[RMDB]
RNA sequence: GGGAACGACUCGAGUAGAGUCGAAAAAUUGGCUGUUCAAAUAUAGCUGUGAGAGUUGCAGCCAUUAAUUUCCCAGAGAAAUGCUUUUCUUUCGCCAUUUCUUGGGAACCUCUUACAGUAAUUACGAAUUUAUCGUCGAUUUCGAUCGACGAUAAAUAAAAGAAACAACAACAACAAC
Reactivity to DMS in 0.01 (KOAc 150mM, MgCl2 10mM, bicine 150mM(pH8.5), 24C), signal-to-noise 3, nucleotides 027 to 126: a050u030u010g010g010c000u000g030u040u030c260a060a040a130u040a080u020a100g000c010u020g000u000g000a020g000a010g000u060u040g010c000a020g010c000c030a040u040u010a070a070u020u010u000c000c010c000a050g030a060g000a010a000a000u010g000c060u030u030u100u010c200u030u060u050c140g000c300c000a000u000u000u000c000u030u010g000g020g000a050a080c300c000u000c000u000u010a000c010a000g000u000a070a100u000u030a060c130g020a120
Reactivity to 2A3 in 0.01 (KOAc 150mM, MgCl2 10mM, bicine 150mM(pH8.5), 24C), signal-to-noise 6, nucleotides 027 to 126: a000u070u030g000g010c010u000g010u100u140c100a030a130a030u300a050u080a160g020c000u000g010u020g000a000g000a010g000u210u160g010c000a000g000c000c000a010u030u080a020a060u030u040u000c000c000c000a000g020a000g000a120a010a010u010g010c050u120u150u130u140c090u080u220u200c120g060c090c000a000u000u000u000c000u010u000g010g010g010a010a000c000c000u000c000u000u010a000c000a010g020u040a010a060u130u100a040c080g050a030